[RMDB]
RNA sequence: GGGAACGACUCGAGUAGAGUCGAAAAGAGUUAUGAUGUGUAAAUCCUAUUCCAUUGCUGAAAUGCAGUGUGGAACAUAAUGAACUGAACUCAAAGCCACGUUUACGCCUUCGGGCGUAAACGUGGCCACAUCAUGAAAGUUCGCUUUCAUGAUGUGAAAAGAAACAACAACAACAAC
Reactivity to DMS in 0.01 (KOAc 150mM, MgCl2 10mM, bicine 150mM(pH8.5), 24C), signal-to-noise 3, nucleotides 027 to 126: g000a050g020u000u000a080u010g000a100u000g010u000g010u010a080a110a130u000c040c040u000a110u010u010c040c000a020u000u010g020c000u000g010a120a080a120u010g010c010a020g030u000g030u000g010g000a030a060c080a040u000a040a060u000g000a080a070c050u000g010a040a050c040u000c030a090a110a140g010c000c000a020c010g000u000u000u000a010c000g010c000c000u000u010c220g020g030g000c020g000u000a000a000a000c000g040u000g000g010c010
Reactivity to 2A3 in 0.01 (KOAc 150mM, MgCl2 10mM, bicine 150mM(pH8.5), 24C), signal-to-noise 4, nucleotides 027 to 126: g030a010g020u050u020a090u170g150a070u170g100u030g050u190a040a110a110u060c020c020u030a110u080u050c030c000a030u030u160g000c000u030g040a070a140a150u190g050c010a000g000u030g020u080g060g020a020a030c030a050u250a140a090u150g070a060a060c060u080g030a020a010c010u000c050a100a070a010g000c000c000a020c000g000u000u000u010a010c000g010c050c020u040u080c220g090g000g000c010g000u000a000a000a000c000g000u000g000g010c000